[RMDB]
RNA sequence: GGGAACGACUCGAGUAGAGUCGAAAACUUUAAAGUUCUUGAUAAUGGUAUCAUUAGGGAUGUAAAUCCUGAUGAUAAGUGCUUUGCUAAUAAGCACCGGUCCUUCACACAAUGGUAUCAUGAGCAUACGGGCUCCAGUUCGCUGGAGCCAAAAGAAACAACAACAACAAC
Reactivity to DMS in 0.01 (KOAc 150mM, MgCl2 10mM, bicine 150mM(pH8.5), 24C), signal-to-noise 4, nucleotides 027 to 129: c070u050u050u040a050a080a120g040u010u030c060u010u040g050a140u030a150a040u030g010g020u010a050u040c010a000u000u030a150g010g010g030a010u030g040u060a000a000a000u000c010c020u020g020a040u030g020a010u000a070a130g000u020g000c020u000u000u000g050c200u030a160a120u050a070a000g100c030a030c010c120g030g020u040c090c110u060u000c060a130c200a050c130a000a000u020g060g060u010a000u020c030a000u020g000a030g030c060a110u040a070c280g010
Reactivity to 2A3 in 0.01 (KOAc 150mM, MgCl2 10mM, bicine 150mM(pH8.5), 24C), signal-to-noise 3, nucleotides 027 to 129: c050u070u070u150a020a060a030g020u040u030c030u030u060g000a070u070a190a060u050g040g000u020a000u010c000a000u000u000a050g040g010g000a010u050g110u300a070a090a040u040c000c000u020g010a000u000g000a010u010a030a020g030u010g000c000u030u020u020g000c000u100a220a060u150a150a000g000c000a000c000c000g010g010u040c000c030u070u050c040a070c010a000c040a090a120u060g010g030u000a000u040c000a030u080g020a000g020c030a050u050a080c020g060